The data come from the RNA Mapping Database (RMDB), library OK3TST. The record gives the reactivity of an RNA of 207 nucleotides to 2A3 and DMS. The 2A3 profile rests on 838 reads.

[RMDB]
RNA sequence: GGGAACGACUCGAGUAGAGUCGAAAAGCAUCCGACAUGGUGCUGGGAUGCGAAUAUCAGCACAAGGCUUUUGCCGAAUUACACCAGAAGAACGCAUGGCUGGUGGAUCAUCCAUGCAUCGUCUCAUAGAGUCGACGAGACGAAAGAUGUCGACAGAAUUAUAAUCGCCGUUCGCGGCGAUUAUAAUAAAAGAAACAACAACAACAAC
Reactivity to 2A3 in 0.01 (KOAc 150mM, MgCl2 10mM, bicine 150mM(pH8.5), 24C), signal-to-noise 2, nucleotides 027 to 156: g030c020a050u030c030c040g030a060c060a110u270g120g000u000g000c000u010g020g000g000a020u020g010c020g030a020a020u060a060u230c020a000g010c020a030c010a110a060g020g000c090u190u120u170u300g070c020c010g000a040a010u180u180a030c070a040c060c000a010g010a060a000g050a140a020c010g000c030a030u040g010g030c020u000g000g010u020g060g020a050u060c020a000u000c020c010a000u010g010c010a040u020c000g040u050c000u020c010a130u120a030g100a060g010u020c010g000a020c000g000a010g000a000c020g030a070a010a000g070a040u060g010u090c040g020a020c060a040g130a060
Reactivity to DMS in 0.01 (KOAc 150mM, MgCl2 10mM, bicine 150mM(pH8.5), 24C), signal-to-noise 1, nucleotides 027 to 156: g020c020a050u000c020c010g050a160c060a110u010g000g090u000g010c020u020g050g010g000a160u000g030c050g030a140a130u000a030u010c050a060g010c030a060c070a140a180g060g000c010u000u020u080u010g000c020c030g030a100a110u000u000a090c000a120c000c020a080g000a170a050g020a170a220c000g000c060a000u000g000g000c070u000g000g030u000g000g000a140u020c020a030u000c000c070a110u000g050c000a300u000c000g000u010c000u030c050a150u010a070g010a180g020u010c080g020a090c070g000a100g020a050c080g000a030a040a120g000a140u000g000u010c030g000a120c060a230g020a240

As a SHAPE reagent, 2A3 marks flexible, mostly unpaired nucleotides at the ribose 2'-OH. The reactions ran in a buffer of 150 mM KOAc, 10 mM MgCl2 and 150 mM bicine (pH 8.5), at 24 C. For 2A3 the reverse transcriptase was SuperScript II with manganese.